[RMDB]
RNA sequence: GGGAACGACUCGAGUAGAGUCGAAAAUGUGAAGAAGUCGCAAAUGACCUCACUACCGCCCUACGCAGGCCUAUUAACGCUACGGAUAGAUCACAUUAUUAUGUGGAUUCCGUUACAGUUAAAGAGAAAACGCGAAGCUUCGGCUUCGCGAAAAGAAACAACAACAACAAC
Reactivity to DMS in 0.01 (KOAc 150mM, MgCl2 10mM, bicine 150mM(pH8.5), 24C), signal-to-noise 3, nucleotides 027 to 129: u010g000u000g010a030a110g030a070a080g090u010c070g050c130a040a060a030u030g000a110c010c090u030c000a010c000u050a120c100c040g000c000c030c030u040a130c170g010c060a110g000g000c070c000u000a000u200u020a000a040c000g000c160u000a020c010g000g000a020u160a040g030a090u070c010a000c090a020u000u010a090u040u050a100u050g070u000g090g050a110u010u020c010c000g000u010u090a010c270a240g000u000u050a000a020a120g050a100g040a100a010a030a070
Reactivity to 2A3 in 0.01 (KOAc 150mM, MgCl2 10mM, bicine 150mM(pH8.5), 24C), signal-to-noise 3, nucleotides 027 to 129: u100g000u000g020a030a060g100a150a060g000u030c050g030c230a090a170a190u210g000a030c000c000u000c000a000c010u000a030c000c000g000c000c000c000u020a030c090g000c120a070g000g000c000c000u130a130u030u020a000a010c030g020c170u060a020c000g020g020a030u050a040g120a140u120c000a000c030a030u020u120a090u230u150a050u140g010u000g000g060a030u000u000c000c000g000u000u030a010c000a030g000u000u020a030a060a000g150a020g040a040a100a000a000
The record gives the reactivity of an RNA of 170 nucleotides to DMS and 2A3. The reactions ran in a buffer of 150 mM KOAc, 10 mM MgCl2 and 150 mM bicine (pH 8.5), at 24 C. The DMS profile rests on 4,757 reads. Source: RMDB library 15KLIB, as collected in RNAgym. For 2A3 the reverse transcriptase was SuperScript II with manganese. Reactivities are given for positions 27 through 129.